[RMDB]
RNA sequence: GGGAACGACUCGAGUAGAGUCGAAAACCUUUUUGACACUUUUCUUGUUGCCUGUGGCUAUUUGUUUGACUUAUGCAAACAUAGUCUACGAGCCCACUACUCCCAUUUCGUCAGCGCUGAUUGCAGUUAGGAGCAGCCUUCGGGCUGCUCAAAAGAAACAACAACAACAAC
Reactivity to 2A3 in 0.01 (KOAc 150mM, MgCl2 10mM, bicine 150mM(pH8.5), 24C), signal-to-noise 3, nucleotides 027 to 129: c000c000u020u040u000u070u100g070a000c000a010c000u120u070u110u030c000u000u050g020u070u070g000c000c000u060g000u040g000g000c030u030a090u030u030u170g000u000u000u000g040a090c030u300u070a110u300g110c000a000a000a000c020a040u030a000g000u020c060u030a040c040g050a000g000c000c000c000a140c030u060a040c070u050c050c000c020a000u020u120u080c060g010u050c040a020g060c060g000c050u000g070a050u090u080g050c000a000g050u000u070a030g000